This 177-nucleotide RNA was probed chemically with DMS and 2A3. It was measured as part of the RMDB library OK1LIB. The reactions ran in a buffer of 150 mM KOAc, 10 mM MgCl2 and 150 mM bicine (pH 8.5), at 24 C. DMS adducts were read by reverse transcription with MarathonRT.
RNA sequence: GGGAACGACUCGAGUAGAGUCGAAAAACUAGUAUGUACACGAUGAGACUGCCGUGUCGUCUAGACUGAGGAUCCAAUAAUCUCAGAUCUGCGAGAUAUUGUCUCAAGAGUACGAGACAAGUACUCAGUGUAAUCACUACUUCGGUGGUGGUUACACAAAAGAAACAACAACAACAAC
Reactivity to DMS in 0.01 (KOAc 150mM, MgCl2 10mM, bicine 150mM(pH8.5), 24C), signal-to-noise 9, nucleotides 027 to 126: a060c030u000a050g010u030a020u020g000u010a020c020a070c040g010a160u020g010a080g010a060c040u010g000c050c020g010u000g000u000c000g010u000c060u030a010g010a170c010u000g010a010g000g010a100u040c160c160a100a110u030a100a100u040c000u000c000a010g010a130u010c040u010g010c050g000a020g000a060u010a030u010u010g000u000c000u000c010a050a140g010a080g020u010a010c030g000a090g010a050c100a050a050g000u010a060c010u000c010a130
Reactivity to 2A3 in 0.01 (KOAc 150mM, MgCl2 10mM, bicine 150mM(pH8.5), 24C), signal-to-noise 9, nucleotides 027 to 126: a000c030u040a020g110u120a080u150g090u080a020c040a010c040g060a070u130g020a020g050a050c040u060g060c050c010g000u020g040u010c010g010u000c040u050a010g000a020c000u000g000a000g010g030a030u040c040c030a040a050u140a070a050u040c000u000c000a030g020a300u020c030u080g050c050g030a030g010a060u070a060u090u060g010u000c000u000c010a020a020g060a010g040u050a020c050g020a010g040a060c060a080a020g020u020a020c000u010c030a010